[RMDB]
RNA sequence: GGGAACGACUCGAGUAGAGUCGAAAAAACUCUUCAGUAGGGACGCGCAUCCCCAUAUAGCUGGCUCGGCAUACCUCAGGACCGCACCUGGUAGUCACCCAUACAGGUAGACUCUUCGUCUAAAGGAAGACGGAAAGCAGGUUUUGCUGGUAUACCCCAUACAAGUCACGUUCGCGUGACUUGUAUGAAAAGAAACAACAACAACAAC
Reactivity to DMS in 0.01 (KOAc 150mM, MgCl2 10mM, bicine 150mM(pH8.5), 24C), signal-to-noise 1, nucleotides 027 to 156: a070a060c040u020c040u000u000c080a180g030u000a060g030g040g000a050c070g050c160g070c110a240u000c050c020c000c020a120u000a170u000a140g000c010u020g010g010c030u020c020g060g050c000a090u000a020c030c020u010c040a150g010g010a050c000c010g000c090a030c000c000u020g020g000u010a070g040u000c080a140c080c020c020a300u000a140c040a000g040g000u000a130g030a100c010u020c010u000u000c030g040u000c010u000a060a120a210g030g020a100a060g000a040c040g010g000a020a030a040g000c060a070g020g020u000u000u000u000g040c070u020g030g030u000a040u010a080c000c010c060
Reactivity to 2A3 in 0.01 (KOAc 150mM, MgCl2 10mM, bicine 150mM(pH8.5), 24C), signal-to-noise 4, nucleotides 027 to 156: a000a000c100u110c050u220u110c070a060g040u140a070g080g010g000a020c030g040c030g000c200a110u080c020c020c000c030a030u210a030u050a120g040c030u030g030g000c030u020c090g020g000c000a010u030a040c020c000u030c000a020g030g020a040c020c040g030c020a040c020c040u030g130g010u090a040g060u060c040a060c050c030c000a060u090a230c030a030g000g020u040a040g060a070c030u000c010u010u030c010g020u000c000u050a090a080a050g270g040a050a040g050a000c000g010g040a040a020a010g070c050a120g000g000u010u020u030u070g020c060u010g000g010u000a010u040a030c000c010c010
The data come from the RNA Mapping Database (RMDB), library VIROID. An RNA of 207 nucleotides, treated with DMS and 2A3 and read out base by base. Reactivities are given for positions 27 through 156. The reactions ran in a buffer of 150 mM KOAc, 10 mM MgCl2 and 150 mM bicine (pH 8.5), at 24 C. For 2A3, 2,492 sequencing reads were counted.